[RMDB]
RNA sequence: GGGAACGACUCGAGUAGAGUCGAAAAAUCGCAUUCAAGCCGGUAGUGUUUUUCACCAUAGCCCUGUUGCUAGGAAUCAAUAUGGUGCUGGGACAUUCGGAGAUAUUGUCCGAAAUCGGGAACGACGUCAGAUCCUCUGAUUCGUCAGAGGAUCUGAAAAAGAAACAACAACAACAAC
Reactivity to 2A3 in 0.01 (KOAc 150mM, MgCl2 10mM, bicine 150mM(pH8.5), 24C), signal-to-noise 4, nucleotides 027 to 126: a000u070c060g020c080a060u070u070c050a070a100g050c000c000g000g080u140a070g060u040g090u060u040u000u020u050c050a050c020c010a010u060a030g020c020c000c040u140g160u290u190g040c080u150a020g010g040a030a090u090c010a050a080u050a010u130g020g000u010g040c070u050g000g020g010a000c010a030u070u060c030g160g020a010g010a040u230a100u100u300g070u000c000c000g050a080a110a060u050c020g000g070g020a030a100c050g030a010c040g070
Reactivity to DMS in 0.01 (KOAc 150mM, MgCl2 10mM, bicine 150mM(pH8.5), 24C), signal-to-noise 3, nucleotides 027 to 126: a090u020c090g000c140a060u060u020c090a060a150g020c050c020g020g000u000a180g000u010g010u000u020u000u000u000c010a030c070c020a030u000a020g000c070c010c020u010g030u010u040g020c130u010a010g010g010a060a090u000c210a150a050u000a000u000g000g030u010g010c130u000g000g000g000a030c000a120u000u020c010g000g000a020g000a150u040a130u050u060g000u000c030c000g000a010a080a070u030c010g000g020g000a100a130c080g000a160c200g000

An RNA of 177 nucleotides, treated with 2A3 and DMS and read out base by base. It was measured as part of the RMDB library OK1LIB. High DMS reactivity at an A or C suggests that its Watson-Crick edge is free.